[RMDB]
RNA sequence: GGGAACGACUCGAGUAGAGUCGAAAACAGUGUGGCCCACUUUUUGGUUUGUUCCUUUGAUUAAUUUCGUUGGCAUGGGUAUUUCAAAACCAAAGUUAUGGAACAUAAGCGAACUCUCAAAUAUUAGACUCUACUAGAGUUUCGACUCUAGUAGAGUAAAAGAAACAACAACAACAAC
Reactivity to DMS in 0.01 (KOAc 150mM, MgCl2 10mM, bicine 150mM(pH8.5), 24C), signal-to-noise 4, nucleotides 027 to 126: c120a080g030u010g030u010g000g000c100c020c050a070c120u000u000u000u000u000g010g010u000u000u000g000u000u000c000c010u010u000u000g000a090u010u000a080a090u000u000u010c100g020u000u000g000g010c040a100u000g000g010g010u000a060u000u020u010c100a060a040a060a060c030c010a020a040a070g000u000u000a060u010g010g010a060a060c050a020u000a070a090g010c080g000a050a070c120u000c030u000c030a070a080a090u010a090u010u000a090g010
Reactivity to 2A3 in 0.01 (KOAc 150mM, MgCl2 10mM, bicine 150mM(pH8.5), 24C), signal-to-noise 2, nucleotides 027 to 126: c030a040g060u020g020u050g190g040c000c000c020a010c050u120u060u020u020u020g050g020u040u050u030g000u000u030c000c000u070u020u110g080a060u100u150a130a050u110u100u110c070g010u030u070g010g020c060a060u040g040g040g080u120a120u010u180u060c100a100a080a010a020c000c000a050a020a010g020u060u080a020u090g030g000a030a010c010a060u050a120a040g020c020g030a030a020c000u030c000u000c020a010a130a020u100a060u130u080a060g030
Chemical mapping of a 177-nucleotide RNA with DMS and 2A3. For 2A3 the reverse transcriptase was SuperScript II with manganese.